[RMDB]
RNA sequence: GGGAACGACUCGAGUAGAGUCGAAAAGAUAUGGACCUUCUCCCCACCGCUACGGAGCGAUGAAAUCGGAAACGAUGGAGCUCCGUAGCGAGGAAGGUCCUAAGUCAAAGUGUGCUUCGGCACACAAGUCGAACACGAAGUUCGCUUCGUGUUCGACAAAAGAAACAACAACAACAAC
Reactivity to DMS in 0.01 (KOAc 150mM, MgCl2 10mM, bicine 150mM(pH8.5), 24C), signal-to-noise 1, nucleotides 027 to 126: g010a150u000a300u000g000g010a000c000c000u030u000c030u010c100c000c010c040a300c190c050g010c010u020a010c010g010g010a010g010c000g000a140u000g010a130a120a000u000c000g000g020a090a030a170c000g000a020u000g000g000a080g000c000u010c000c000g020u010a000g020c020g000a010g000g000a010a000g000g010u020c010c000u000a030a040g010u000c070a100a030a200g000u000g020u000g000c040u010u000c130g000g040c000a020c010a010c020a010a070

Overview: This 177-nucleotide RNA was probed chemically with DMS. Conditions: 150 mM KOAc, 10 mM MgCl2 and 150 mM bicine (pH 8.5), 24 C. The data come from the RNA Mapping Database (RMDB), library TTRDEL. The DMS profile rests on 843 reads.